[RMDB]
RNA sequence: GGGAACGACUCGAGUAGAGUCGAAAAUCGUAGGAGAUGAUGCUUCGGCAACCCGGCCCCAAGCACAAUACACGUAAUCCGCCCGACAUUGGUGCUUUUGCAUCCCAAUUGCCGUAAACGCCUGACAACUCUGGGCAAUGUUCGCAUUGCCCAGAGUAAAAGAAACAACAACAACAAC
Reactivity to 2A3 in 0.01 (KOAc 150mM, MgCl2 10mM, bicine 150mM(pH8.5), 24C), signal-to-noise 3, nucleotides 027 to 126: u120c040g000u020a050g010g110a070g030a090u100g030a060u010g060c050u060u010c030g060g020c040a080a120c040c000c000g100g000c000c000c000c000a030a060g050c020a010c060a010a030u190a050c050a000c060g040u070a000a080u040c030c030g020c000c000c000g060a080c020a040u020u120g090g010u090g010c050u010u070u080u230g010c000a070u030c010c010c010a000a090u080u080g000c010c000g020u030a000a160a040c010g000c000c050u060g030a030c060a050
Reactivity to DMS in 0.01 (KOAc 150mM, MgCl2 10mM, bicine 150mM(pH8.5), 24C), signal-to-noise 1, nucleotides 027 to 126: u000c090g000u020a130g000g000a120g040a050u000g010a020u040g040c010u000u030c120g030g000c090a130a010c050c010c010g000g050c070c000c000c030a050a090g000c030a090c080a080a070u010a040c040a120c230g000u010a040a120u020c050c000g000c040c010c100g020a010c030a040u000u000g000g000u000g000c040u030u010u020u000g020c000a000u000c070c040c050a140a060u000u020g050c030c040g010u010a050a140a070c000g000c020c050u070g000a060c150a070
An RNA of 177 nucleotides, treated with 2A3 and DMS and read out base by base. It was measured as part of the RMDB library OK1LIB. DMS adducts were read by reverse transcription with MarathonRT. For 2A3 the reverse transcriptase was SuperScript II with manganese. Conditions: 150 mM KOAc, 10 mM MgCl2 and 150 mM bicine (pH 8.5), 24 C. Values cover nucleotides 27 to 126.